[RMDB]
RNA sequence: GGGAACGACUCGAGUAGAGUCGAAAAUCGCUAAGCUUCGGCUUAGCGAAAAGUCGCGGCUUGUGGGCGUGUACGGCUGCGCACACACACGACCCUCAAGCCAAAGCAUCGUGUUCGCACGAUGCAACCUGAGUCCUACGUUCGCGUAGGACUCAGGAAAAGAAACAACAACAACAAC
Reactivity to DMS in 0.01 (KOAc 150mM, MgCl2 10mM, bicine 150mM(pH8.5), 24C), signal-to-noise 1, nucleotides 027 to 126: u000c000g000c010u000a000a010g000c000u000u000c290g010g030c000u000u000a000g000c000g000a000a010a010a060g030u000c130g020c290g000g000c010u020u000g040u010g000g020g000c030g040u000g010u000a160c110g010g020c030u010g030c160g030c070a040c040a070c120a000c000a020c000g000a130c000c000c000u020c000a000a000g010c000c020a010a060a030g010c020a010u000c020g040u000g010u000u010c210g030c020a000c000g000a010u000g010c010a000a040
Reactivity to 2A3 in 0.01 (KOAc 150mM, MgCl2 10mM, bicine 150mM(pH8.5), 24C), signal-to-noise 2, nucleotides 027 to 126: u010c000g000c000u000a000a010g000c010u010u200c260g160g000c000u010u040a000g000c010g000a000a000a000a020g010u000c070g000c050g090g010c000u020u000g010u010g000g000g000c040g020u000g000u000a030c080g070g010c080u230g050c080g050c000a020c000a000c000a000c020a010c040g300a300c040c000c000u000c010a000a000g000c000c010a010a010a010g010c000a010u010c040g000u010g020u030u110c250g030c080a000c000g000a000u000g020c000a020a010

The data come from the RNA Mapping Database (RMDB), library M2PK50. The record gives the reactivity of an RNA of 177 nucleotides to DMS and 2A3. DMS adducts were read by reverse transcription with MarathonRT. The DMS profile rests on 866 reads. Conditions: 150 mM KOAc, 10 mM MgCl2 and 150 mM bicine (pH 8.5), 24 C.